[RMDB]
RNA sequence: GGGAACGACUCGAGUAGAGUCGAAAAAGCUCCUGUUUCGACAGGAGCUGUGUGGCUGCCCUUUUGUGCUCGAUGUAGAGUGCUUUCCUGCCGGAAACGGCUUGAGAGCUUGAUUCGUCAAGCUCAAAACAGAUGCAUUUUUCGAAAUGCAUCUGUUAAAAGAAACAACAACAACAAC
Reactivity to DMS in 0.01 (KOAc 150mM, MgCl2 10mM, bicine 150mM(pH8.5), 24C), signal-to-noise 7, nucleotides 027 to 126: a020g010c000u000c000c000u000g000u000u000u010c170g010a040c000a000g000g010a010g020c000u000g000u000g020u010g010g000c070u010g010c030c020c030u000u000u000u000g010u000g000c010u000c030g010a100u010g010u010a120g000a120g010u000g010c020u000u000u000c000c010u000g010c000c010g010g000a080a090a180c010g010g000c010u010u000g000a130g000a010g000c000u010u000g000a120u000u010c140g010u000c000a010a000g000c000u000c010a020a050
Reactivity to 2A3 in 0.01 (KOAc 150mM, MgCl2 10mM, bicine 150mM(pH8.5), 24C), signal-to-noise 2, nucleotides 027 to 126: a000g000c010u020c010c000u010g010u010u090u070c210g090a010c010a000g000g000a000g000c000u000g000u010g000u020g050g010c060u060g050c010c000c000u050u040u030u070g040u010g020c000u000c010g070a090u160g050u160a070g020a020g050u060g000c000u010u020u010c010c020u030g030c010c000g010g020a070a070a050c000g020g000c000u030u080g090a080g000a020g010c000u000u010g020a020u050u040c090g030u000c080a010a000g000c000u000c000a010a070

Source: RMDB library M2PK50, as collected in RNAgym. Chemical mapping of a 177-nucleotide RNA with DMS and 2A3. For 2A3 the reverse transcriptase was SuperScript II with manganese. The reactions ran in a buffer of 150 mM KOAc, 10 mM MgCl2 and 150 mM bicine (pH 8.5), at 24 C.